[RMDB]
RNA sequence: GGGAACGACUCGAGUAGAGUCGAAAAAGCGCUAGAGAUGUACACGGGUUUGCCCCCUUAUCUGUGUACUAUCUCUGUUCAUACCUUAGGGAUAGGUUGAGUGGGGGCGGUCUGAAAUUGGCGCGAAGUGUAUUUAAUUAUUCGUAAUUAAAUACACAAAAGAAACAACAACAACAAC
Reactivity to 2A3 in 0.01 (KOAc 150mM, MgCl2 10mM, bicine 150mM(pH8.5), 24C), signal-to-noise 9, nucleotides 027 to 126: a000g010c010g000c020u050a020g010a020g020a220u090g120u140a050c070a020c050g030g000g030u020u050u300g000c000c000c000c010c000u020u140a110u110c030u020g170u030g050u120a040c000u010a000u000c000u000c000u000g030u060u060c060a090u120a280c050c000u060u110a020g010g000g020a010u010a020g080g030u090u100g030a020g010u050g000g000g000g000g000c000g000g000u000c010u000g030a030a020a020u060u050g010g000c010g000c010g040a080a020
Reactivity to DMS in 0.01 (KOAc 150mM, MgCl2 10mM, bicine 150mM(pH8.5), 24C), signal-to-noise 9, nucleotides 027 to 126: a140g010c010g010c010u010a060g010a080g000a070u010g010u010a070c150a110c050g000g000g000u000u010u040g010c020c000c010c010c010u000u020a060u000c010u000g010u030g010u030a090c000u010a010u000c000u000c000u000g010u030u030c140a100u030a090c190c140u010u030a050g010g010g000a030u010a000g000g020u010u000g010a050g010u000g010g010g000g010g020c010g000g000u000c010u000g000a050a090a110u020u010g000g010c010g010c000g010a050a080